[RMDB]
RNA sequence: GGGAACGACUCGAGUAGAGUCGAAAAGAUAUGGAUUCAGCUUACGAUAUGUGGGAGGCUCCUACCUAGGAUCGGAAACGAUCCUAGGUAGAAGAGCCGAAGAACACAUACCUAUGAAUCCUAAGUCCACUAAUGUGGAGUUCGCUCCACAUUAGUGAAAAGAAACAACAACAACAAC
Reactivity to 2A3 in 0.01 (KOAc 150mM, MgCl2 10mM, bicine 150mM(pH8.5), 24C), signal-to-noise 1, nucleotides 027 to 126: g030a040u160a060u300g000g000a000u000u000c010a040g100c180u300u300a090c160g070a090u020a000u000g020u000g010g030g000a040g020g000c010u040c000c000u010a040c020c000u000a000g000g000a020u000c040g010g100a100a090a060c030g000a000u000c010c000u000a000g010g010u000a000g010a020a000g000a010g000c000c030g000a020a010g000a000a000c010a000c000a000u000a020c020c030u210a160u150g030a020a010u000c000c010u020a200a010g080u000c040
Reactivity to DMS in 0.01 (KOAc 150mM, MgCl2 10mM, bicine 150mM(pH8.5), 24C), signal-to-noise 2, nucleotides 027 to 126: g010a130u000a300u010g030g010a010u000u000c000a020g020c300u000u000a140c250g000a030u000a010u000g020u000g000g000g020a100g010g010c000u000c000c010u000a010c000c000u000a000g000g020a010u010c010g020g000a140a110a300c010g010a000u000c000c000u000a000g000g000u000a000g000a080a120g020a030g020c000c000g000a030a060g000a140a170c000a000c000a000u000a010c010c020u020a130u000g020a000a000u000c000c010u000a040a150g010u000c050

This 177-nucleotide RNA was probed chemically with 2A3 and DMS.
The DMS profile rests on 2,428 reads.
Conditions: 150 mM KOAc, 10 mM MgCl2 and 150 mM bicine (pH 8.5), 24 C.
For DMS the reverse transcriptase was MarathonRT.